Conditions: 150 mM KOAc, 10 mM MgCl2 and 150 mM bicine (pH 8.5), 24 C. Chemical mapping of a 177-nucleotide RNA with 2A3 and DMS.
RNA sequence: GGGAACGACUCGAGUAGAGUCGAAAAAUAAACCGGAAGCGACGCAGCAAGCCCGACCGGAAGGGCAACCGGAACCCGGAUCUGAACCCGGUUGGGACGCACCUGAGAGACGGGAAUGCGUAAAAAAACAUUGGAUUAGUUUCGACUAAUCCAAUGUAAAAGAAACAACAACAACAAC
Reactivity to 2A3 in 0.01 (KOAc 150mM, MgCl2 10mM, bicine 150mM(pH8.5), 24C), signal-to-noise 1, nucleotides 027 to 126: a020u100a000a060a040c000c000g000g000a110a000g040c030g050a030c030g000c070a050g070c030a110a000g020c020c000c010g020a020c000c000g020g010a030a040g020g040g000c030a000a060c000c020g000g060a050a110c050c040c000g010g070a110u060c040u060g040a070a080c010c000c000g040g000u000u010g000g000g000a020c020g000c000a030c000c010u090g000a140g010a000g040a140c060g040g000g000a000a100u030g000c000g000u010a050a050a000a000a000a000
Reactivity to DMS in 0.01 (KOAc 150mM, MgCl2 10mM, bicine 150mM(pH8.5), 24C), signal-to-noise 3, nucleotides 027 to 126: a060u020a050a060a150c000c000g010g010a250a230g020c140g010a040c070g000c050a060g030c090a160a150g000c000c010c020g000a010c010c000g000g010a060a070g000g000g010c050a010a030c020c000g000g000a090a080c050c010c010g000g030a090u010c040u010g000a140a110c170c010c000g000g000u000u000g000g000g000a070c060g000c030a100c010c020u000g000a160g010a100g000a150c080g000g000g020a080a070u000g010c000g000u010a000a000a070a050a070a060

Reactivities are rounded to 0.1 and cut off at 0 and 3.